Overview:
Chemical mapping of a 177-nucleotide RNA with DMS and 2A3. The RNA was probed in 150 mM KOAc, 10 mM MgCl2 and 150 mM bicine (pH 8.5) at 24 C. For 2A3 the reverse transcriptase was SuperScript II with manganese.

RNA sequence: GGGAACGACUCGAGUAGAGUCGAAAAUCUGUUUACAAGUAAUCGUUAAGUCCAUGUCUGACUACGAUUCCGUAAACAGAAGCCAGUUUGCGUCAAGUCCGACAUGGACUCUUGGCAGAACUGAUCACUACUCCAAUGAAUUCGUUCAUUGGAGUAGAAAAGAAACAACAACAACAAC
Reactivity to DMS in 0.01 (KOAc 150mM, MgCl2 10mM, bicine 150mM(pH8.5), 24C), signal-to-noise 2, nucleotides 027 to 126: u010c000u000g010u000u010u000a060c020a050a080g020u020a030a050u010c070g020u000u000a080a040g020u010c010c070a110u000g010u010c150u000g010a020c020u010a080c080g010a030u000u010c110c130g010u000a000a010a010c000a040g000a060a120g010c130c060a050g020u000u010u000g010c120g000u000c040a050a030g010u000c010c050g030a100c150a070u020g000g000a020c020u000c000u000u000g000g000c000a300g000a000a010c070u000g000a240u000c240a300
Reactivity to 2A3 in 0.01 (KOAc 150mM, MgCl2 10mM, bicine 150mM(pH8.5), 24C), signal-to-noise 2, nucleotides 027 to 126: u000c010u000g040u030u040u060a030c030a060a070g040u070a130a060u070c050g030u050u210a100a020g000u030c030c040a100u150g090u050c100u050g020a020c000u020a040c080g030a000u110u000c040c010g000u000a010a000a010c010a010g040a050a010g090c030c000a010g020u010u010u020g050c010g020u040c030a040a030g000u000c000c010g050a180c250a210u150g010g000a030c000u000c040u090u030g020g000c000a040g000a060a020c050u110g110a170u300c130a020